Overview
An RNA of 177 nucleotides, treated with DMS and 2A3 and read out base by base. The data come from the RNA Mapping Database (RMDB), library OK1LIB. Values cover nucleotides 27 to 126. The 2A3 profile rests on 13,437 reads. 2A3 adducts were read by reverse transcription with SuperScript II with manganese.

[RMDB]
RNA sequence: GGGAACGACUCGAGUAGAGUCGAAAAGGCCGCCGACCCGAUGCUGGUAAAGCGGUUGCGGCGGCUGCGUGCCAGUCGGCAGAAGGCGCGGGCCGCGCGACGCCUUGGCUUCGAGGUGACCUGACACACCUUCCAAUUGUUUCGACAAUUGGAAGGUAAAAGAAACAACAACAACAAC
Reactivity to DMS in 0.01 (KOAc 150mM, MgCl2 10mM, bicine 150mM(pH8.5), 24C), signal-to-noise 4, nucleotides 027 to 126: g000g010c020c010g000c010c000g000a160c160c060c040g010a040u000g000c010u000g000g020u030a080a110a150g000c000g020g020u010u010g020c000g020g010c020g010g000c000u000g010c000g020u000g000c000c000a150g020u020c060g000g000c210a100g000a150a140g000g010c000g020c010g000g000g000c020c020g020c020g000c010g000a040c000g000c010c020u010u050g010g010c010u010u000c020g010a080g020g030u020g000a100c010c010u010g000a100c140a070c190
Reactivity to 2A3 in 0.01 (KOAc 150mM, MgCl2 10mM, bicine 150mM(pH8.5), 24C), signal-to-noise 9, nucleotides 027 to 126: g020g010c010c000g000c010c010g090a120c010c030c030g040a050u080g000c040u070g010g300u250a120a070a020g010c020g060g020u050u060g020c040g220g000c010g000g000c010u020g110c010g010u010g000c010c020a070g150u170c050g110g040c060a070g060a170a060g020g000c010g000c000g010g020g000c000c010g000c000g000c010g010a010c010g010c000c000u060u160g010g000c000u030u020c010g020a060g000g010u010g010a030c000c010u050g070a010c030a000c000